This 207-nucleotide RNA was probed chemically with 2A3. For 2A3 the reverse transcriptase was SuperScript II with manganese.
RNA sequence: GGGAACGACUCGAGUAGAGUCGAAAACAGACAUCGCUAAUGCGUUUGGUGCUGAUGUGAUGAUCUCCUUGCAGUGCGAUAAGUACCCGAAUGAUAAAGCCAAUGGCGUUGCUAGCUUCUAUUUCGGUUCCGAGAUGGGUUCUAGUUCGCUGACGGAGUACCGACUGCUCUUCGGAGCAGUCGGUACAAAAGAAACAACAACAACAAC
Reactivity to 2A3 in 0.01 (KOAc 150mM, MgCl2 10mM, bicine 150mM(pH8.5), 24C), signal-to-noise 1, nucleotides 027 to 156: c070a000g130a000c040a020u000c000g010c030u030a100a090u130g030c030g120u150u170u300g270g000u260g000c060u010g040a080u060g000u080g010a060u000g040a060u000c010u000c050c000u020u080g000c050a060g030u000g030c030g070a100u030a100a060g020u080a040c000c000c000g110a210a190u110g060a040u090a130a090a000g060c020c000a100a100u210g000g000c000g080u040u060g090c000u000a000g010c000u000u000c000u040a000u000u080u000c070g050g100u300u100c140c050g010a010g000a000u040g000g000g000u050u000c000u000a030g000u000u190c000g040c000u000g060a060c070g000g000a010